[RMDB]
RNA sequence: GGGAACGACUCGAGUAGAGUCGAAAACUGCCAAUACAAAUGGAACUUCAAGGAGUCCAGGAUUAUGAAUUUGGGGUAUCAAAAGCAGCAUGUCACUAUGAUCUUAUGUCUAACUGCUGAUUGCUGAUCAACUUUAAUAGUUCGCUAUUAAAGUUGAAAAAGAAACAACAACAACAAC
Reactivity to 2A3 in 0.01 (KOAc 150mM, MgCl2 10mM, bicine 150mM(pH8.5), 24C), signal-to-noise 9, nucleotides 027 to 126: c020u090g060c000c000a050a030u090a080c030a020a110a040u050g020g030a150a140c010u060u050c080a120a130g130g000a030g050u000c010c010a010g030g040a090u160u160a080u250g140a130a060u040u030u060g010g000g000g040u060a060u160c070a070a040a030a040g020c010a000g000c010a020u120g040u070c000a010c060u080a080u130g030a040u040c040u140u200a080u250g030u000c010u020a060a080c040u060g010c020u020g040a110u050u090g020c010u010g020a070
Reactivity to DMS in 0.01 (KOAc 150mM, MgCl2 10mM, bicine 150mM(pH8.5), 24C), signal-to-noise 9, nucleotides 027 to 126: c040u000g010c020c020a040a050u000a100c070a050a110a110u000g000g010a060a060c030u000u000c070a100a150g020g010a060g010u000c010c020a040g010g010a300u010u010a050u010g010a100a110u000u000u000g000g000g010g010u000a060u000c080a050a060a110a070g000c020a010g010c020a040u010g010u010c060a040c080u010a080u010g000a050u000c180u000u010a070u010g010u000c020u000a100a110c100u000g010c070u000g010a060u000u000g010c070u000g000a170
Chemical mapping of a 177-nucleotide RNA with 2A3 and DMS. The 2A3 profile rests on 19,461 reads. The DMS profile rests on 25,896 reads. It was measured as part of the RMDB library OK2TST.